Notes: Chemical mapping of a 207-nucleotide RNA with 2A3.
RNA sequence: GGGAACGACUCGAGUAGAGUCGAAAAGUGUACUUUGUAAGGUUCAAGCUGUACAGUAAAUCAAACUAUACGGGUCUUGUCGGACUGUAUGACUCACACAACUUUACCAUUACGAGUGGUGCUUGAUAUGGCAACCGCAUUUAUGAUCACAGCAACAGCUACACUGUGGUUUCGACCACAGUGUAGCAAAAGAAACAACAACAACAAC
Reactivity to 2A3 in 0.01 (KOAc 150mM, MgCl2 10mM, bicine 150mM(pH8.5), 24C), signal-to-noise 1, nucleotides 027 to 156: g040u010g000u040a040c050u140u120u030g020u040a030a100g050g000u030u060c030a020a090g010c020u050g010u000a010c000a040g020u030a090a040a030u130c050a050a050a020c020u030a080u090a140c030g060g050g050u020c040u040u080g210u070c070g060g000a000c020u000g000u020a050u110g000a020c020u070c020a050c010a000c000a110a080c000u100u080u080a050c010c020a050u050u050a080c180g000a030g040u030g000g000u000g010c010u080u070g100a080u090a000u290g020g000c000a020a020c000c000g210c060a000u040u050u080a060u110g050a070u060c040a050c020a000g070c040a000a100c000a020
Overview: Source: RMDB library OK3TST, as collected in RNAgym. The RNA was probed in 150 mM KOAc, 10 mM MgCl2 and 150 mM bicine (pH 8.5) at 24 C.